[RMDB]
RNA sequence: GGGAACGACUCGAGUAGAGUCGAAAAAUGCACGUAACGCAGCAGCGAAAUCUCAACCCUUGCGAUCCACGUGGAUCACCCUUUUGCGGAAAGCGCAAGAGAAACUCAAGCCGAAACGACAUUGUAGGUUCACACAACUGUUCGCAGUUGUGUGAACAAAAGAAACAACAACAACAAC
Reactivity to DMS in 0.01 (KOAc 150mM, MgCl2 10mM, bicine 150mM(pH8.5), 24C), signal-to-noise 2, nucleotides 027 to 126: a090u000g010c030a060c080g020u000a080a070c130g000c050a040g010c110a040g000c020g000a060a080a070u010c040u000c010a060a160c070c020c010u010u000g000c120g020a040u010c040c040a150c140g030u020g020g020a040u010c030a100c130c110c020u000u020u010u000g010c040g000g000a100a090a150g060c020g000c020a010a000g010a040g020a060a040a030c100u020c030a040a050g030c060c000g000a030a070a100c070g020a110c100a100u000u000g000u020a080g020
Reactivity to 2A3 in 0.01 (KOAc 150mM, MgCl2 10mM, bicine 150mM(pH8.5), 24C), signal-to-noise 3, nucleotides 027 to 126: a000u080g000c020a000c050g050u080a130a000c020g040c030a030g000c010a010g040c070g060a120a080a050u110c100u010c040a040a070c020c010c000u020u110g050c010g010a020u020c070c020a050c140g080u210g020g010a000u030c030a080c040c010c020u030u040u020u090g010c020g000g130a190a170a060g300c000g000c000a000a000g020a010g060a060a020a020c040u030c050a050a020g020c030c000g030a040a090a030c050g100a020c020a040u050u100g060u130a050g100
Source: RMDB library OK2TST, as collected in RNAgym. This 177-nucleotide RNA was probed chemically with DMS and 2A3. The DMS profile rests on 1,240 reads. The reactions ran in a buffer of 150 mM KOAc, 10 mM MgCl2 and 150 mM bicine (pH 8.5), at 24 C.